The data come from the RNA Mapping Database (RMDB), library 15KLIB. An RNA of 170 nucleotides, treated with DMS and 2A3 and read out base by base. 2A3 adducts were read by reverse transcription with SuperScript II with manganese. The RNA was probed in 150 mM KOAc, 10 mM MgCl2 and 150 mM bicine (pH 8.5) at 24 C. Reactivities are given for positions 27 through 129. For 2A3, 5,971 sequencing reads were counted.

[RMDB]
RNA sequence: GGGAACGACUCGAGUAGAGUCGAAAAAUAGGCUUAUCAAGAGAGGUGGAGGGACUGGCCCGAUGACACCCGGCAGCCAGAAAUGGUGCCAAUUCCUGCAGCGGAAACGUUGAAAGAUGAGCCGAUGUGACGUUCAGCUUCGGCUGAACGAAAAGAAACAACAACAACAAC
Reactivity to DMS in 0.01 (KOAc 150mM, MgCl2 10mM, bicine 150mM(pH8.5), 24C), signal-to-noise 3, nucleotides 027 to 129: a000u050a020g000g000c040u000u030a020u050c040a080a000g070a040g000a100g040g030u010g000g000a090g000g010g040a000c150u000g080g060c000c050c040g020a050u020g000a080c280a000c000c030c040g030g030c110a100g040c040c050a020g000a090a060a060u030g060g040u040g000c000c000a070a100u050u030c020c040u060g000c050a020g040c000g060g040a080a100a110c020g030u000u000g020a060a080a060g070a000u050g000a030g020c020c020g020a080u010g030u030g010a190
Reactivity to 2A3 in 0.01 (KOAc 150mM, MgCl2 10mM, bicine 150mM(pH8.5), 24C), signal-to-noise 3, nucleotides 027 to 129: a000u090a030g020g000c000u040u040a030u030c090a130a030g020a000g000a110g120g010u010g010g040a030g010g000g010a000c070u050g100g000c020c000c010g020a070u040g030a000c020a040c040c000c000g000g010c020a020g140c000c020a000g030a020a070a030u070g010g000u010g000c000c000a000a030u040u000c010c000u030g020c020a000g010c000g050g000a010a040a010c010g000u010u050g010a100a060a060g010a020u040g000a020g000c020c010g000a050u090g080u080g100a010